[RMDB]
Notes: Structure probing data (2A3 and DMS) for a 207-nucleotide construct. The 2A3 profile rests on 1,351 reads. For 2A3 the reverse transcriptase was SuperScript II with manganese. The data come from the RNA Mapping Database (RMDB), library OK3TST.

RNA sequence: GGGAACGACUCGAGUAGAGUCGAAAAACUUCAUGUGACACAGAUUACUGAUAAAUUCCUUUAUUGUGAGGUCAUUCUCCUAAAUUAGAAAGAACCAGAGAUGGCAUAUGUAAGACCCAAAGUGAGUUUGUGGAUGAGAGUGAGUCACAGAGAUCAAAGUAAAUUAUACGUUCGCGUAUAAUUUACUAAAAGAAACAACAACAACAAC
Reactivity to 2A3 in 0.01 (KOAc 150mM, MgCl2 10mM, bicine 150mM(pH8.5), 24C), signal-to-noise 3, nucleotides 027 to 156: a000c020u070u040c030a090u070g010u000g060a020c010a010c030a140g100a250u080u160a080c020u060g040a090u100a150a060a110u080u080c020c000u020u100u140a150u140u200g020u030g030a040g040g010u040c040a060u080u050c020u040c010c020u090a120a200a200u130u020a030g040a070a140a020g030a020a010c050c010a010g010a010g030a120u030g010g030c070a060u040a040u130g030u020a030a040g030a040c000c000c020a050a050a020g060u070g040a040g060u040u050u130g060u070g000g040a040u060g010a020g000a010g060u040g030a020g010u020c010a020c000a030g050a020g010a040u170c120a110a110
Reactivity to DMS in 0.01 (KOAc 150mM, MgCl2 10mM, bicine 150mM(pH8.5), 24C), signal-to-noise 2, nucleotides 027 to 156: a090c050u000u000c020a070u010g030u010g000a100c020a130c080a130g000a220u000u000a070c010u010g000a120u000a040a120a190u000u000c010c030u000u000u000a100u040u000g000u000g010a090g010g020u000c090a050u020u000c010u000c030c050u000a050a030a150u000u000a090g010a070a090a200g020a230a050c030c000a060g010a240g000a120u000g000g020c010a040u000a040u010g040u000a050a140g000a120c010c010c030a070a080a110g010u020g000a090g020u000u000u000g040u000g010g030a130u000g010a130g000a100g010u010g000a140g020u000c020a070c030a080g010a140g010a110u000c040a070a080